An RNA of 207 nucleotides, treated with DMS and 2A3 and read out base by base. Conditions: 150 mM KOAc, 10 mM MgCl2 and 150 mM bicine (pH 8.5), 24 C.

[RMDB]
RNA sequence: GGGAACGACUCGAGUAGAGUCGAAAAUUACUCUUGUUAGGUGAAAGUUGAUGGUCGCCGAGCCAGUCCGUACAUCCAAAAAGGACUCUAUGUAGUAGGAAUUCGAGAGCCUAUGAGAGUUAGAGUCAUGCCUAUUUUGUGUUCGCACAAAAUAGAACUCAGUAUUUAACUUCGGUUAAAUACUGAGAAAAGAAACAACAACAACAAC
Reactivity to DMS in 0.01 (KOAc 150mM, MgCl2 10mM, bicine 150mM(pH8.5), 24C), signal-to-noise 1, nucleotides 027 to 156: u000u000a050c000u000c020u000u000g000u000u020a070g030g030u010g010a100a080a080g000u000u000g000a170u000g030g020u000c030g030c020c050g020a140g000c020c050a170g010u000c000c000g000u010a050c030a090u010c030c070a010a030a080a130a160g050g010a010c000u000c010u000a030u000g020u010a280g020u000a030g020g010a050a160u000u000c110g000a170g000a270g030c000c020u000a010u000g000a210g010a150g010u000u000a050g020a060g020u000c000a070u020g010c150c000u000a030u020u000u000u000g020u010g000u000u010c280g000c010a070c000a000a000a000a000u000a020g010a040a140
Reactivity to 2A3 in 0.01 (KOAc 150mM, MgCl2 10mM, bicine 150mM(pH8.5), 24C), signal-to-noise 3, nucleotides 027 to 156: u080u060a050c010u020c000u040u050g030u070u110a030g030g020u020g050a110a080a070g040u100u060g080a140u090g040g040u050c030g000c140c000g010a010g000c020c020a000g090u040c020c030g050u040a040c030a090u070c020c020a040a050a070a010a040g150g000a000c000u000c000u010a040u060g040u010a020g010u010a010g040g020a060a080u100u080c090g030a060g010a010g230c010c000u000a020u020g070a080g000a000g100u010u040a010g000a000g000u010c030a050u100g100c000c010u000a000u000u000u010u000g020u000g020u050u060c190g060c110a000c000a000a000a000a000u010a020g010a040a040

For 2A3, 1,511 sequencing reads were counted.